[RMDB]
RNA sequence: GGGAACGACUCGAGUAGAGUCGAAAAUCUUAUAUGUUCGCAUAUAAGAAAAGGCGGAGUAGUGUUGGGUCGCGAAAGGCCAAAAAUUAACAAUCACUCAGAUACAGACCUGGUUCGCCAGGUCUAACCUCCUACAGGAAUUCGUUCCUGUAGGAGGAAAAGAAACAACAACAACAAC
Reactivity to DMS in 0.01 (KOAc 150mM, MgCl2 10mM, bicine 150mM(pH8.5), 24C), signal-to-noise 1, nucleotides 027 to 126: u000c000u000u000a020u010a010u010g010u000u030c170g010c010a010u000a010u000a000a010g010a030a070a110a160g010g010c050g010g020a030g030u010a090g030u010g000u000u000g020g030g010u030c030g000c100g000a070a130a110g000g000c000c010a000a040a070a130a070u000u000a030a060c080a060a050u010c110a020c080u000c060a100g020a110u000a140c190a040g010a030c010c000u010g000g030u000u030c210g010c000c000a000g000g010u010c000u000a010a100
Source: RMDB library M2PK50, as collected in RNAgym. Chemical mapping of a 177-nucleotide RNA with DMS. For DMS the reverse transcriptase was MarathonRT. The DMS profile rests on 696 reads. Values cover nucleotides 27 to 126.